This 177-nucleotide RNA was probed chemically with DMS and 2A3. For DMS the reverse transcriptase was MarathonRT. For 2A3, 1,805 sequencing reads were counted. For DMS, 1,354 sequencing reads were counted. Source: RMDB library TTRDEL, as collected in RNAgym. The reactions ran in a buffer of 150 mM KOAc, 10 mM MgCl2 and 150 mM bicine (pH 8.5), at 24 C. Reactivities are rounded to 0.1 and cut off at 0 and 3.

RNA sequence: GGGAACGACUCGAGUAGAGUCGAAAAGAUAUGGACUGGUUAGAGCUUUUGACGACUGAUGUCGGAAACGACAUUUCGAUAAGCUCGACCAGUCCUAAGUCAAAAUCAAGUCCUUCGGGACUUGAAACUAUUGGUGUGACUUCGGUCACACCAAUAGAAAAGAAACAACAACAACAAC
Reactivity to DMS in 0.01 (KOAc 150mM, MgCl2 10mM, bicine 150mM(pH8.5), 24C), signal-to-noise 2, nucleotides 027 to 126: g000a060u020a300u010g000g010a000c020u000g000g010u000u000a090g020a010g010c020u000u000u000u000g020a070c140g000a040c300u010g000a050u000g000u000c000g000g000a040a080a260c010g000a000c000a010u000u000u000c000g000a050u010a020a060g010c000u000c000g000a020c000c000a020g000u000c020c000u000a010a060g010u000c040a040a090a050a150u000c010a010a010g000u000c000c000u000u020c210g000g000g000a000c000u010u020g000a030a110a100
Reactivity to 2A3 in 0.01 (KOAc 150mM, MgCl2 10mM, bicine 150mM(pH8.5), 24C), signal-to-noise 1, nucleotides 027 to 126: g000a030u040a040u130g010g020a030c000u020g000g090u130u090a300g060a000g040c070u040u100u210u270g250a140c070g050a080c120u280g110a020u010g000u010c000g000g080a070a040a000c020g000a000c010a000u010u030u000c020g020a050u000a210a010g000c000u000c000g000a000c000c000a010g000u010c000c000u010a000a000g000u000c010a000a000a030a190u020c000a010a000g000u000c010c000u060u140c290g060g000g000a000c000u000u000g010a040a000a000